[RMDB]
RNA sequence: GGGAACGACUCGAGUAGAGUCGAAAAAGAUUGUAUUUUGUCAUCACUGAAAAACUCUUGGCCAACUACAUCUUGCCACUUUUUGACGCGCUGACUAUGACAGACAACCUGAACAAGGUGUUUAAAACGUUUUACAUGCUUUCGAGCAUGUAAAACGAAAAGAAACAACAACAACAAC
Reactivity to 2A3 in 0.01 (KOAc 150mM, MgCl2 10mM, bicine 150mM(pH8.5), 24C), signal-to-noise 4, nucleotides 027 to 126: a000g090a090u140u160g020u070a060u040u060u020u030g040u010c010a020u010c040a060c100u120g070a020a010a100a070a060c040u040c040u070u030g040g000c020c010a070a020c050u050a010c010a090u010c000u030u050g020c030c000a080c000u050u150u060u050u200g030a050c020g020c000g040c020u010g010a040c020u050a070u170g050a070c030a040g040a010c000a020a130c010c010u010g020a030a040c080a070a070g040g010u030g010u000u050u030a050a070a000a010
Reactivity to DMS in 0.01 (KOAc 150mM, MgCl2 10mM, bicine 150mM(pH8.5), 24C), signal-to-noise 3, nucleotides 027 to 126: a060g000a070u010u000g010u020a040u010u000u030u020g010u050c040a020u000c130a060c180u030g000a080a060a020a040a070c120u010c050u000u010g000g000c010c020a040a120c100u000a040c040a020u010c010u010u000g000c090c000a090c060u000u000u000u000u020g000a100c030g000c040g000c020u000g000a060c020u010a070u000g000a090c150a090g020a040c080a100a120c010c000u020g000a090a080c240a040a030g000g040u000g000u010u000u000a050a050a100a280